[RMDB]
RNA sequence: GGGAACGACUCGAGUAGAGUCGAAAAUUGGUAUCGCGAGGUCAAUGCCAAAAGGCAGCUUCAGAACAAACAGGAAGAGAAACCCUGAUGAGUAUUCGCAUUGUCCCUAAAGAUCAAUUAGGUAAACAGACAGUGAUCGAUUCGUCGAUCACUGUCUAAAAGAAACAACAACAACAAC
Reactivity to DMS in 0.01 (KOAc 150mM, MgCl2 10mM, bicine 150mM(pH8.5), 24C), signal-to-noise 1, nucleotides 027 to 126: u000u000g000g020u010a020u000c010g000c210g000a140g040g000u010c040a050a010u000g030c040c110a000a050a180a050g000g020c030a070g000c020u000u010c050a080g020a110a070c060a090a150a150c160a050g000g020a100a060g000a170g000a140a070a170c130c000c000u000g010a050u010g000a050g010u000a090u060u040c200g000c000a040u020u000g000u000c050c000c010u000a050a040a160g000a010u000c070a000a120u000u000a100g000g000u000a030a110a080c280
Reactivity to 2A3 in 0.01 (KOAc 150mM, MgCl2 10mM, bicine 150mM(pH8.5), 24C), signal-to-noise 1, nucleotides 027 to 126: u020u040g020g000u010a000u130c030g030c050g130a090g080g000u050c050a140a020u080g010c010c000a040a150a050a080g080g010c060a020g040c040u080u120c040a030g070a090a020c000a000a150a050c000a010g010g090a050a060g030a000g070a130a110a060c000c000c000u020g020a070u070g000a010g020u100a150u050u150c070g030c010a020u030u030g030u110c030c000c000u080a070a140a050g040a010u040c010a000a140u080u030a100g050g100u170a150a050a050c020
The record gives the reactivity of an RNA of 177 nucleotides to DMS and 2A3.
Source: RMDB library OK2TST, as collected in RNAgym.
The RNA was probed in 150 mM KOAc, 10 mM MgCl2 and 150 mM bicine (pH 8.5) at 24 C.
DMS adducts were read by reverse transcription with MarathonRT.